[RMDB]
An RNA of 207 nucleotides, treated with 2A3 and read out base by base. It was measured as part of the RMDB library M2RFOK. The reactions ran in a buffer of 150 mM KOAc, 10 mM MgCl2 and 150 mM bicine (pH 8.5), at 24 C.
RNA sequence: GGGAACGACUCGAGUAGAGUCGAAAAUGGGCUACCAGUAAGCGAAAAAUGAUACAGGCCGAAAAAAACAUAAUUCGAGAUUUUUCAGGAUGGAUUUUUUUAGGUAUCUAUCAAAACUAUUCUGAUGCAACGUAGAGCACGUUCGCGUGCUCUACAAGAUACCAUACGGCUUCGGCCGUAUGGUAUCAAAAGAAACAACAACAACAAC
Reactivity to 2A3 in 0.01 (KOAc 150mM, MgCl2 10mM, bicine 150mM(pH8.5), 24C), signal-to-noise 1, nucleotides 027 to 156: u070g020g000g030c020u030a010c020c000a040g050u160a060a040g020c020g070a000a190a000a000a030u070g020a010u020a060c020a030g010g010c050c000g060a060a000a000a000a000a090a040c040a040u150a130a050u090u020c010g040a000g010a220u140u030u030u070u270c000a000g000g000a010u020g000g000a030u020u000u000u000u020u040u020a010g020g000u230a070u210c010u020a010u040c000a000a030a030a010c010u030a020u060u040c010u020g050a040u070g100c040a090a030c050g000u000a010g000a000g000c010a000c000g010u050u080c110g040c020g080u000g000c030u000c000u000a000c000a000a000